[RMDB]
Conditions: 150 mM KOAc, 10 mM MgCl2 and 150 mM bicine (pH 8.5), 24 C. Structure probing data (DMS and 2A3) for a 177-nucleotide construct. High 2A3 reactivity points to a flexible backbone, as in loops and unpaired stretches. 2A3 adducts were read by reverse transcription with SuperScript II with manganese. DMS adducts were read by reverse transcription with MarathonRT.
RNA sequence: GGGAACGACUCGAGUAGAGUCGAAAAACGUGGAUGCUAGUCUCAUAGGUUAAGCCAUGCAUGUGCAAGCGAAGCGUAAGUGGAGCGGCGCAAGGCUCAGUAACGGGCGAGUAUUUGAUCUCCUAGAAUCAGCGGUUGUAUUCGUACAACCGCUGAUAAAAGAAACAACAACAACAAC
Reactivity to DMS in 0.01 (KOAc 150mM, MgCl2 10mM, bicine 150mM(pH8.5), 24C), signal-to-noise 1, nucleotides 027 to 126: a130c170g020u000g000g000a070u010g000c000u020a010g020u000c000u000c140a050u030a060g000g000u030u030a000a070g000c010c000a170u010g000c060a100u000g000u000g000c100a000a280g010c020g000a260a200g020c100g000u050a080a100g040u040g010g000a300g070c110g000g000c040g000c050a110a050g070g000c000u030c070a060g000u090a000a030c100g000g000g000c030g000a000g040u030a020u000u010u040g000a120u010c000u000c010c010u000a070g000a090
Reactivity to 2A3 in 0.01 (KOAc 150mM, MgCl2 10mM, bicine 150mM(pH8.5), 24C), signal-to-noise 2, nucleotides 027 to 126: a000c040g020u060g000g000a040u020g020c030u040a000g000u040c040u020c020a170u180a050g160g000u200u070a060a000g060c040c000a030u130g040c020a060u050g060u070g050c100a160a150g000c040g010a010a010g000c010g040u090a110a030g010u010g050g040a090g000c030g000g000c000g010c030a000a100g020g000c000u000c030a100g020u060a120a010c020g000g000g000c010g010a030g050u000a030u010u000u060g060a090u040c000u000c060c000u010a040g090a070